[RMDB]
Conditions: 150 mM KOAc, 10 mM MgCl2 and 150 mM bicine (pH 8.5), 24 C. The record gives the reactivity of an RNA of 177 nucleotides to 2A3 and DMS. The DMS profile rests on 8,930 reads.

RNA sequence: GGGAACGACUCGAGUAGAGUCGAAAAUCGGAAGACCGCCCGAAAGAUGAGUGUGAAACCUGCUGCAUUAAGUAUCCGAACGGGCGCAACGUGCUGUCGCAGGAAAACCAACAAGUGUUUGAAAUCACGUGACUAUAGGAUUCGUCCUAUAGUCACGAAAAGAAACAACAACAACAAC
Reactivity to 2A3 in 0.01 (KOAc 150mM, MgCl2 10mM, bicine 150mM(pH8.5), 24C), signal-to-noise 6, nucleotides 027 to 126: u100c000g020g020a070a000g070a060c000c030g040c000c010c030g070a110a070a010g120a080u180g040a040g070u110g010u040g080a130a070a070c010c010u010g030c000u050g010c020a020u050u070a100a050g060u080a070u080c020c040g060a140a090c080g020g020g000c020g000c020a030a040c070g060u080g010c020u040g050u090c030g000c000a010g030g000a020a060a000a050c050c020a040a070c050a130a110g040u040g040u030u050u050g090a060a060a040u080c070a050
Reactivity to DMS in 0.01 (KOAc 150mM, MgCl2 10mM, bicine 150mM(pH8.5), 24C), signal-to-noise 5, nucleotides 027 to 126: u030c030g010g010a160a100g020a090c140c050g050c020c000c010g030a070a120a120g000a060u020g000a060g010u000g020u020g000a090a100a090c090c010u000g000c010u000g000c030a030u000u030a050a170g010u020a070u010c030c040g000a080a170c130g000g000g000c060g030c070a010a040c190g020u000g010c020u000g000u040c130g000c030a060g000g020a020a030a090a090c080c040a050a090c200a100a090g010u010g000u000u010u010g010a040a060a020u000c150a150